An RNA of 177 nucleotides, treated with 2A3 and DMS and read out base by base. Values cover nucleotides 27 to 126.
[RMDB]
RNA sequence: GGGAACGACUCGAGUAGAGUCGAAAACUCCAGGAGGAAGGCUGGUUCCGUGGCUUUUUGGAUGCCCUAGACCAUGCAGGUUAGUUCAUUCUUUUUAAUCACAAAUCAGAGGAUAUUACUUUGCUGCAAUUUCGAAGUGAUUCGUCACUUCGAAAUUAAAAGAAACAACAACAACAAC
Reactivity to 2A3 in 0.01 (KOAc 150mM, MgCl2 10mM, bicine 150mM(pH8.5), 24C), signal-to-noise 2, nucleotides 027 to 126: c030u020c010c010a040g100g000a040g030g040a100a020g030g000c070u040g020g000u090u000c010c040g010u020g040g060c000u070u050u040u140u210g070g040a020u040g010c000c000c010u050a080g010a080c030c030a030u110g080c050a030g040g090u050u050a010g020u050u040c040a010u030u020c000u090u120u050u070u120a090a110u080c030a050c030a130a100a010u050c020a010g010a030g120g020a020u020a050u190u040a080c040u120u070u090g080c020u040g030c030
Reactivity to DMS in 0.01 (KOAc 150mM, MgCl2 10mM, bicine 150mM(pH8.5), 24C), signal-to-noise 5, nucleotides 027 to 126: c080u000c010c030a090g000g010a110g010g000a080a070g000g010c040u000g000g020u000u000c070c070g010u000g010g010c080u020u000u000u010u000g010g010a080u000g010c070c070c020u000a100g010a090c070c040a110u010g020c120a080g000g000u000u000a040g010u000u000c080a040u010u010c020u000u010u000u000u010a040a100u010c090a070c130a070a040a080u000c050a050g010a040g010g010a100u010a060u010u010a080c050u000u010u000g010c060u000g010c150
The reactions ran in a buffer of 150 mM KOAc, 10 mM MgCl2 and 150 mM bicine (pH 8.5), at 24 C. For 2A3, 1,865 sequencing reads were counted. DMS adducts were read by reverse transcription with MarathonRT. Source: RMDB library OK2TRN, as collected in RNAgym.